[RMDB]
An RNA of 207 nucleotides, treated with DMS and 2A3 and read out base by base. The 2A3 profile rests on 2,654 reads. Conditions: 150 mM KOAc, 10 mM MgCl2 and 150 mM bicine (pH 8.5), 24 C. Source: RMDB library OK3TST, as collected in RNAgym.

RNA sequence: GGGAACGACUCGAGUAGAGUCGAAAAAAGGUCCUGCUGCGCAGACAGCCAAUCACUGAGAAGUAUUGCCAAAGAAGAAGGGUUUAAUUGGGUGCUGCAGCUGAGGAGAUAGGAUCUCAGUCUCAAAUCUAUCUCCCUGACUGACUAAAACCAGGGGCGUUAGUAUUAUCUUCGGAUAAUACUAACGAAAAGAAACAACAACAACAAC
Reactivity to DMS in 0.01 (KOAc 150mM, MgCl2 10mM, bicine 150mM(pH8.5), 24C), signal-to-noise 2, nucleotides 027 to 156: a070a080g020g020u020c030c070u010g000c050u000g010c040g000c050a170g020a290c030a060g000c030c000a120a120u000c080a080c020u010g010a120g020a060a110g030u000a040u010u000g010c020c010a150a100a150g010a090a080g010a120a130g010g010g030u000u000u000a050a110u020u010g050g000g030u000g000c050u020g000c000a030g010c020u010g020a050g000g000a050g020a040u000a050g020g000a050u010c040u000c040a120g020u000c060u010c070a070a050a050u000c000u000a030u000c010u000c000c000c020u000g010a050c000u000g010a090c050u000a060a060a060a090c020c020a090g010g020g030g030
Reactivity to 2A3 in 0.01 (KOAc 150mM, MgCl2 10mM, bicine 150mM(pH8.5), 24C), signal-to-noise 4, nucleotides 027 to 156: a000a010g030g010u020c000c010u010g010c010u040g030c090g000c010a030g090a300c030a030g080c020c020a040a090u080c040a040c130u040g010a000g020a100a020g030u110a060u120u180g030c020c030a130a040a000g050a070a030g040a040a060g110g020g020u070u160u180a120a080u140u090g040g020g000u040g010c050u060g000c010a020g000c020u020g020a060g030g000a000g000a010u020a020g060g050a050u050c060u000c090a030g150u020c040u010c050a080a140a070u030c000u010a010u000c010u010c000c000c010u020g050a080c010u000g010a030c010u060a050a050a030a040c020c010a020g000g010g000g000